[RMDB]
RNA sequence: GGGAACGACUCGAGUAGAGUCGAAAAAGCACGGUUUUUGAGGACGCAUUUUGUCCGUGCGGUAAUGCCCUCCUUUACACUUUCUCGCAUGGUGUGGGAGUGUGGAGAGGAAACAAAAGCUAGUCUCGAUAGGCGGUUAACUUCGGUUAACCGCCAACAUUCUUCACCAGUUCGCUGGUGAAGAAUGAAAAGAAACAACAACAACAAC
Reactivity to 2A3 in 0.01 (KOAc 150mM, MgCl2 10mM, bicine 150mM(pH8.5), 24C), signal-to-noise 4, nucleotides 027 to 156: a000g010c010a010c010g000g030u000u030u000u000u010g080a120g030g010a010c040g010c120a180u040u010u000u000g000u000c000c000g000u000g010c000g020g060u160a050a040u230g030c000c000c000u040c010c000u030u070u060a000c000a010c000u050u090u040c030u020c000g060c070a130u210g160g050u190g090u010g090g000g000a000g000u010g010u010g020g000a040g010a020g030g020a020a020a010c010a020a000a020a000g030c040u080a050g000u000c010u000c020g040a100u100a110g000g000c000g000g010u000u000a000a000c000u020u050c120g000g000u000u000a000a000c010c000g010c000c000a000a000
Reactivity to DMS in 0.01 (KOAc 150mM, MgCl2 10mM, bicine 150mM(pH8.5), 24C), signal-to-noise 1, nucleotides 027 to 156: a080g010c000a020c000g030g000u000u000u000u010u000g000a090g020g000a060c030g000c100a170u000u000u000u000g020u000c020c020g040u010g000c000g020g030u000a060a060u010g020c000c000c000u000c020c000u010u020u000a060c010a020c020u000u000u010c020u010c030g040c070a300u000g050g020u020g080u000g010g000g020a010g010u000g020u000g020g000a060g010a170g010g010a070a030a040c020a010a020a040a050g000c030u000a120g000u010c000u000c070g020a140u010a170g020g030c010g020g020u000u000a010a010c000u000u000c300g030g010u000u000a010a010c000c010g000c000c000a000a020
The record gives the reactivity of an RNA of 207 nucleotides to 2A3 and DMS. Conditions: 150 mM KOAc, 10 mM MgCl2 and 150 mM bicine (pH 8.5), 24 C. For 2A3 the reverse transcriptase was SuperScript II with manganese.